[RMDB]
RNA sequence: GGGAACGACUCGAGUAGAGUCGAAAAGGUCGACCGGUUGUCUGAUAAGGCAGUGCCGGGCAGCUACGCGCUAGGUGAUAAAGGCUGAAAGCAUCUAAGCCUGAGGUAUCCCCUGAAAAUAGAUUGCAUUAUCCUGGCGAUUCGUCGCCAGGAUAAUAAAAGAAACAACAACAACAAC
Reactivity to DMS in 0.01 (KOAc 150mM, MgCl2 10mM, bicine 150mM(pH8.5), 24C), signal-to-noise 4, nucleotides 027 to 126: g010g000u000c040g010a170c000c020g000g010u010u010g010u000c020u000g020a150u030a070a060g030g000c020a020g010u030g010c010c000g000g000g000c070a060g000c030u000a070c120g010c080g010c020u020a050g020g000u020g020a090u020a070a130a070g020g000c000u000g000a100a110a090g000c070a040u030c030u000a160a110g010c000c000u000g020a070g000g010u020a110u010c010c000c010c070u030g000a050a060a080a090u030a060g000a080u030u000g020c070
Reactivity to 2A3 in 0.01 (KOAc 150mM, MgCl2 10mM, bicine 150mM(pH8.5), 24C), signal-to-noise 3, nucleotides 027 to 126: g020g010u050c020g080a100c000c040g020g020u040u010g010u020c010u030g060a180u070a250a060g020g000c010a020g070u050g140c010c000g020g020g000c010a010g000c000u040a020c020g060c020g010c070u050a020g060g060u030g030a040u030a110a150a010g010g040c010u010g030a070a070a010g000c000a000u000c010u010a010a010g000c000c000u020g010a020g020g030u090a060u020c000c020c000c000u030g060a020a000a030a020u090a030g040a030u040u130g000c000